[RMDB]
RNA sequence: GGGAACGACUCGAGUAGAGUCGAAAAGAUAUGGAACACUGUGGUUCUGCGUUGUAGACAUGAUUUAAGGGUCGGAAACGACCCGGAGAUCAACAGCUACACCGCAGAACCACAGUGUUCCUAAGUCCGAUGAGGAAUUGUUCGCAAUUCCUCAUCGAAAAGAAACAACAACAACAAC
Reactivity to DMS in 0.01 (KOAc 150mM, MgCl2 10mM, bicine 150mM(pH8.5), 24C), signal-to-noise 1, nucleotides 027 to 126: g000a120u030a300u000g000g000a010a000c000a020c000u010g050u020g000g040u000u000c000u000g030c000g030u000u010g000u000a000g000a130c060a260u000g020a000u000u010u000a300a300g000g000g000u000c000g000g020a130a120a260c060g000a000c010c000c000g010g000a140g000a020u000c010a070a080c300a180g000c010u000a000c020a010c050c000g060c020a000g000a020a020c000c000a010c000a020g010u000g000u000u000c000c000u000a010a010g000u030c050
Chemical mapping of a 177-nucleotide RNA with DMS. The data come from the RNA Mapping Database (RMDB), library TTRINS. DMS adducts were read by reverse transcription with MarathonRT. The DMS profile rests on 780 reads. Conditions: 150 mM KOAc, 10 mM MgCl2 and 150 mM bicine (pH 8.5), 24 C.